[RMDB]
An RNA of 177 nucleotides, treated with DMS and read out base by base. The RNA was probed in 150 mM KOAc, 10 mM MgCl2 and 150 mM bicine (pH 8.5) at 24 C. The DMS profile rests on 776 reads. Values are in units of 0.01, from 0 to 300, in steps of 10.
RNA sequence: GGGAACGACUCGAGUAGAGUCGAAAAGAUAUGGAGCUAGAACUACGGUGGAGCCACUCUGAGAGGACGUCGGAAACGACGUCUCCCCACCUCAACGUGAGUGGCUCCACCGCUAGCUCCUAAGUCACGUACCACUAAACUUCGGUUUAGUGGUACGAAAAGAAACAACAACAACAAC
Reactivity to DMS in 0.01 (KOAc 150mM, MgCl2 10mM, bicine 150mM(pH8.5), 24C), signal-to-noise 1, nucleotides 027 to 126: g000a020u000a300u010g030g010a020g000c000u000a040g000a210a080c220u040a300c010g030g030u000g000g000a000g000c020c020a020c010u030c030u120g000a100g010a110g010g000a010c000g000u010c000g000g000a070a080a240c000g040a000c000g010u000c000u000c070c000c000c030a300c050c050u000c040a050a160c260g000u000g000a020g000u000g070g000c000u000c010c000a000c010c020g020c010u030a000g000c000u000c000c000u000a000a030g000u000c040a270